[RMDB]
The record gives the reactivity of an RNA of 177 nucleotides to DMS and 2A3. High 2A3 reactivity points to a flexible backbone, as in loops and unpaired stretches. It was measured as part of the RMDB libraries RFM100 and RFMREP.

RNA sequence: GGGAACGACUCGAGUAGAGUCGAAAAGGGAGAUCGGCGUUGGGCUAGGGUUUUGUGUGGUUCCGUGGUGUCGCGUGGAAGGCGCGUGCGAGCCGAGAGUGAGUGGGAGCGCGAAUGUGUGGCUUGACAACAACCCUAAAUUCGUUUAGGGUUGUUGAAAAGAAACAACAACAACAAC
Reactivity to DMS in 0.01 (KOAc 150mM, MgCl2 10mM, bicine 150mM(pH8.5), 24C), signal-to-noise 6, nucleotides 027 to 126: g010g020g000a090g000a090u010c060g010g020c080g010u010u010g010g000g000c070u000a090g010g000g000u000u010u010u010g020u020g020u020g000g020u010u000c060c030g020u010g000g020u010g020u020c040g020c050g020u010g010g010a110a110g000g010c040g010c050g010u010g010c060g000a140g010c020c030g010a060g000a070g010u020g010a080g010u010g000g000g010a090g020c050g010c060g010a070a080u020g010u010g010u000g010g020c010u000u000g010a300
Reactivity to 2A3 in 0.01 (KOAc 150mM, MgCl2 10mM, bicine 150mM(pH8.5), 24C), signal-to-noise 9, nucleotides 027 to 126: g040g020g010a090g020a090u090c050g040g000c050g050u080u070g040g030g000c080u070a070g030g020g020u030u050u140u100g120u020g020u050g040g010u070u010c050c030g030u070g010g050u080g030u060c020g010c030g020u050g060g070a160a090g070g010c020g000c010g030u070g010c030g010a020g000c010c030g030a030g010a010g040u120g020a030g020u090g010g030g000a050g010c030g000c030g040a070a100u080g030u000g000u020g060g010c000u020u020g000a010